[RMDB]
RNA sequence: GGGAACGACUCGAGUAGAGUCGAAAAAACGUAACGAGGAGUUACAUGGCUUCCAGACUGCUGGACCCCGAUACCCUCGUCGAACUCGAAGGUGUUAACGGUGAGUGGUUCGACCUCACCAACGGCACCGAGGGGAUCUACCUCGCUACCGAGGUGAUAAUUGGGAUAGGUUCGCCUAUCCCAAUUAAAAAGAAACAACAACAACAAC
Reactivity to DMS in 0.01 (KOAc 150mM, MgCl2 10mM, bicine 150mM(pH8.5), 24C), signal-to-noise 2, nucleotides 027 to 156: a080a030c090g020u000a000a040c030g000a090g030g000a210g000u000u000a070c090a140u000g050g030c030u000u010c010c000a110g010a240c170u010g020c030u020g000g010a100c090c000c010c030g010a150u000a020c020c010c020u000c000g010u000c010g000a100a100c050u000c030g000a100a150g000g000u000g000u000u000a100a130c120g030g010u000g000a020g050u000g000g000u000u000c100g020a160c010c000u010c010a020c040c000a030a090c070g000g000c020a020c040c010g000a080g010g000g000g000a090u000c060u010a040c000c000u010c000g000c090u000a070c130c000g000a140g020g020u000g010a140
Reactivity to 2A3 in 0.01 (KOAc 150mM, MgCl2 10mM, bicine 150mM(pH8.5), 24C), signal-to-noise 3, nucleotides 027 to 156: a000a000c060g010u030a040a000c000g020a010g030g010a210g030u080u060a050c020a070u060g010g030c050u060u000c020c010a110g100a300c200u170g090c020u010g270g000a020c000c000c010c000g030a070u090a050c000c000c000u000c000g000u000c030g020a050a060c010u020c110g060a110a030g000g000u010g020u050u050a060a020c100g010g000u000g010a000g050u160g040g110u120u180c120g070a170c060c000u020c000a000c000c000a000a030c070g000g000c000a000c000c010g010a000g010g020g000g000a000u020c020u060a040c000c000u010c020g080c110u130a110c100c110g000a020g000g000u000g010a010
Notes:
Chemical mapping of a 207-nucleotide RNA with DMS and 2A3. For 2A3, 1,791 sequencing reads were counted. For DMS, 5,496 sequencing reads were counted. 2A3 adducts were read by reverse transcription with SuperScript II with manganese. High DMS reactivity at an A or C suggests that its Watson-Crick edge is free. The RNA was probed in 150 mM KOAc, 10 mM MgCl2 and 150 mM bicine (pH 8.5) at 24 C.